RNA sequence: GGGAACGACUCGAGUAGAGUCGAAAAAGACCACCAGCUAAGGUCCCAAAAUAUAUGUUAAGUGGAAAAGGAUGUGGGGUUGCACAGACAACUAGGAUGUUAGCUUAGAAGCAGCUAUUCAUUCAAAGAAUAAUGGUGGGUUCGCCCACCAUUAUUCAAAAGAAACAACAACAACAAC
Reactivity to DMS in 0.01 (KOAc 150mM, MgCl2 10mM, bicine 150mM(pH8.5), 24C), signal-to-noise 2, nucleotides 027 to 126: a070g010a140c030c040a090c050c040a080g020c050u000a090a100g000g000u000c000c000c000a070a030a090a120u000a080u020a060u010g010u000u000a100a100g010u000g030g000a110a050a110a150g020g010a070u000g020u000g000g000g000g020u000u000g000c050a120c060a040g000a030c050a000a050c040u000a120g020g000a000u000g010u000u000a020g000c000u000u000a110g010a090a080g020c250a050g020c030u000a000u010u000c020a080u010u010c040a060a070a110